[RMDB]
RNA sequence: GGGAACGACUCGAGUAGAGUCGAAAAUUUUCACUUUUCUGCCCAAAUCGAAUAUUUCAUGCGAACCGCUCGAAAUAUUUUCCAGCGGUUGACCCCAAGGGAAAAUCUGAUGGGGAGGAAGGCGGAAUGCCUAUACGAUGUUCGCAUCGUAUAGGCAAAAAGAAACAACAACAACAAC
Reactivity to 2A3 in 0.01 (KOAc 150mM, MgCl2 10mM, bicine 150mM(pH8.5), 24C), signal-to-noise 3, nucleotides 027 to 126: u070u080u030u010c020a010c020u050u000u020u010c000u040g150c010c000c010a040a110a050u080c010g030a040a000u030a200u120u080u040c050a050u200g060c000g070a030a010c010c000g000c000u010c010g040a000a030a040u300a090u120u180u020u000c010c000a020g000c010g000g000u000u030g010a040c020c000c000c040a060a070g060g020g010a030a080a010a080u050c030u090g030a060u080g050g000g000g000a010g020g000a010a000g020g000c040g020g060a020a050
Reactivity to DMS in 0.01 (KOAc 150mM, MgCl2 10mM, bicine 150mM(pH8.5), 24C), signal-to-noise 2, nucleotides 027 to 126: u040u000u040u000c020a100c040u010u000u000u020c010u000g000c000c030c000a000a120a130u010c050g000a050a070u030a050u010u000u010c020a090u050g010c120g010a010a010c040c010g000c000u020c300g010a030a010a040u000a050u000u010u000u000c050c070a030g000c070g020g010u000u000g010a160c030c060c010c080a050a200g000g000g000a040a020a020a080u020c030u030g000a230u010g000g030g000g000a000g000g000a010a010g000g020c000g000g010a040a020

This 177-nucleotide RNA was probed chemically with 2A3 and DMS. Source: RMDB library OK1LIB, as collected in RNAgym. 2A3 is a SHAPE reagent: it acylates the 2'-hydroxyl of flexible nucleotides of all four kinds. For 2A3 the reverse transcriptase was SuperScript II with manganese. The 2A3 profile rests on 1,518 reads.